Background: An RNA of 170 nucleotides, treated with DMS and 2A3 and read out base by base. The 2A3 profile rests on 11,702 reads. The RNA was probed in 150 mM KOAc, 10 mM MgCl2 and 150 mM bicine (pH 8.5) at 24 C. The DMS profile rests on 22,881 reads. Reactivities are given for positions 27 through 129. In probing experiments dimethyl sulfate is read out at A N1 and C N3, which are open when not base-paired.

[RMDB]
RNA sequence: GGGAACGACUCGAGUAGAGUCGAAAAAUAGGCUUAUCAAGAGAGGUGGAGGGAAUGGCCCGAUGAAACCCGGCAGCCAGAAAUGGUGCCAAUUCCUGCAGCGGAAACGUUGAAGGAUGAGCCGAUGAGAUCCAACACUUCGGUGUUGGAAAAAGAAACAACAACAACAAC
Reactivity to DMS in 0.01 (KOAc 150mM, MgCl2 10mM, bicine 150mM(pH8.5), 24C), signal-to-noise 2, nucleotides 027 to 129: a050u000a060g000g000c020u030u010a090u020c050a100a070g040a070g000a080g010g000u040g040g000a060g000g000g020a170a050u090g010g050c080c000c010g000a120u000g000a100a140a000c000c000c000g040g040c090a100g010c000c000a000g040a080a040a090u030g000g000u040g020c060c040a020a040u000u000c030c000u000g020c020a000g020c000g000g000a070a060a110c040g030u000u040g000a100a040g030g000a050u000g000a020g000c010c030g000a060u000g010a060g020a130
Reactivity to 2A3 in 0.01 (KOAc 150mM, MgCl2 10mM, bicine 150mM(pH8.5), 24C), signal-to-noise 3, nucleotides 027 to 129: a030u150a020g000g010c000u040u030a030u090c070a080a010g020a010g000a060g040g010u030g010g020a020g020g000g050a110a000u130g180g040c000c000c000g060a130u070g020a000a030a010c010c000c000g000g000c020a060g170c000c000a010g020a010a050a030u020g010g000u010g000c000c000a000a010u040u030c000c000u060g020c000a010g000c000g000g000a080a030a020c000g010u010u010g040a060a010g010g000a030u020g020a030g000c000c000g020a040u090g030a020g010a020